[RMDB]
RNA sequence: GGGAACGACUCGAGUAGAGUCGAAAAUACAUCCAUGACACUUCAAUCUAUGGCUCAAUGUUUGGGCACCGGACUACGAUCAGCCGCCCAGAAGGAAGUGAGUCAUAUUGCCCUACUGUUCAUGAGAUCGAGCAGUAAUCUUCGGAUUACUGCUCGAAAAAGAAACAACAACAACAAC
Reactivity to 2A3 in 0.01 (KOAc 150mM, MgCl2 10mM, bicine 150mM(pH8.5), 24C), signal-to-noise 1, nucleotides 027 to 126: u120a000c020a050u010c080c040a020u030g020a020c080a000c050u090u200c090a010a190u010c020u090a040u020g000g000c000u000c000a010a160u060g070u020u000u030g030g020g000c010a000c070c140g100g030a110c040u190a090c190g300a170u140c050a010g070c030c000g000c050c000c010a020g020a050a000g150g000a070a190g010u040g060a000g010u000c020a000u020a050u020u120g080c030c010c050u000a020c050u090g000u020u050c010a020u030g020a050g000a180
Reactivity to DMS in 0.01 (KOAc 150mM, MgCl2 10mM, bicine 150mM(pH8.5), 24C), signal-to-noise 1, nucleotides 027 to 126: u000a150c140a090u000c080c030a000u000g000a070c080a060c180u000u000c050a030a050u000c090u000a060u000g000g020c000u000c020a000a020u020g010u000u000u000g000g030g010c190a050c150c080g000g000a050c110u000a250c240g010a100u000c060a070g020c190c050g020c040c000c020a010g020a040a020g030g040a120a110g020u000g000a050g030u000c000a020u000a020u000u000g020c160c030c020u010a110c300u000g000u000u000c010a030u000g000a180g000a070